[RMDB]
RNA sequence: GGGAACGACUCGAGUAGAGUCGAAAACAAGCAGUCUAAUGUCUUUAGAUCCGCUGGCCUGCGGGCAUGACAAUGUCAAACAGUCAAAGAUUGUGGCGUUGACGGUCAGUCUUGGGGACAAAAAAGAAGUAUUAUAUGACUUCGGUCAUAUAAUACUAAAAGAAACAACAACAACAAC
Reactivity to 2A3 in 0.01 (KOAc 150mM, MgCl2 10mM, bicine 150mM(pH8.5), 24C), signal-to-noise 6, nucleotides 027 to 126: c040a020a010g040c010a010g010u000c010u060a110a040u120g100u130c080u070u070u040a040g010a080u040c040c070g000c040u020g020g030c010c000u040g030c030g010g020g000c020a040u020g010a010c020a060a170u170g010u010c000a040a060a080c030a070g010u010c020a070a120a060g220a190u130u250g090u040g090g000c010g010u010u010g010a010c020g010g000u010c010a000g000u000c010u040u100g030g000g010g010a010c030a020a120a020a010a010a010g120a050
Reactivity to DMS in 0.01 (KOAc 150mM, MgCl2 10mM, bicine 150mM(pH8.5), 24C), signal-to-noise 9, nucleotides 027 to 126: c080a130a050g010c020a190g010u000c020u000a030a050u010g010u010c150u010u000u000a030g000a040u000c050c080g020c020u000g010g010c010c020u010g010c150g010g000g010c020a040u000g010a040c030a100a080u010g020u000c020a030a050a090c060a120g020u000c010a060a110a170g010a140u010u000g020u000g010g020c030g010u000u000g010a030c020g010g000u000c020a040g010u000c020u000u000g010g000g010g010a060c130a000a040a070a070a070a100g010a110

Chemical mapping of a 177-nucleotide RNA with 2A3 and DMS. Values cover nucleotides 27 to 126. The reactions ran in a buffer of 150 mM KOAc, 10 mM MgCl2 and 150 mM bicine (pH 8.5), at 24 C. DMS adducts were read by reverse transcription with MarathonRT.